Annotation: Chemical mapping of a 207-nucleotide RNA with DMS and 2A3. 2A3 adducts were read by reverse transcription with SuperScript II with manganese. For DMS, 9,124 sequencing reads were counted. It was measured as part of the RMDB library M2RFPK. The RNA was probed in 150 mM KOAc, 10 mM MgCl2 and 150 mM bicine (pH 8.5) at 24 C.

RNA sequence: GGGAACGACUCGAGUAGAGUCGAAAACUAGGGGGUAUUCCGGUGUGGGAUACUUAGGAAUAUGCAACGCUAAUUGCAUAAGAUUGUAGGACGGAAUUUACAGUCUUGGUUUUUCAAACCUGAAACUUGUGGUAGUACGCGUUCGCGCGUACUACAAACUUACUGCAUAGUUCGCUAUGCAGUAAGUAAAAGAAACAACAACAACAAC
Reactivity to DMS in 0.01 (KOAc 150mM, MgCl2 10mM, bicine 150mM(pH8.5), 24C), signal-to-noise 3, nucleotides 027 to 156: c040u000a070g010g000g010g040g010u000a040u000u000c020c000g020g020u010g020u010g030g000g010a050u010a020c030u000u000a070g020g020a130a130u000a030u000g020c000a030a020c060g000c200u010a100a130u000u010g000c010a040u000a030a040g000a050u000u010g020u000a020g030g000a220c040g000g020a100a300u000u000u000a040c020a030g010u000c000u000u010g000g010u010u010u010u000u000c120a110a080a080c020c000u000g020a100a070a140c070u000u000g030u000g020g010u000a010g010u000a000c000g010c000g020u000u000c300g050c040g030c000g020u000a000c000u000a010c000a010a040
Reactivity to 2A3 in 0.01 (KOAc 150mM, MgCl2 10mM, bicine 150mM(pH8.5), 24C), signal-to-noise 6, nucleotides 027 to 156: c030u050a040g040g020g000g000g000u020a020u010u020c020c010g160g070u190g040u120g070g030g020a020u040a040c010u020u110a070g020g040a050a060u030a010u040g000c000a020a020c060g000c180u170a100a060u090u020g000c000a010u010a020a030g020a040u030u070g020u040a020g020g070a030c080g050g070a070a060u080u110u060a060c020a010g010u020c000u040u050g030g020u040u020u030u050u090c040a060a060a050c010c010u020g060a070a060a120c060u080u120g050u080g150g010u000a000g010u000a000c000g010c000g010u030u060c140g000c000g000c000g060u000a000c000u000a000c000a000a000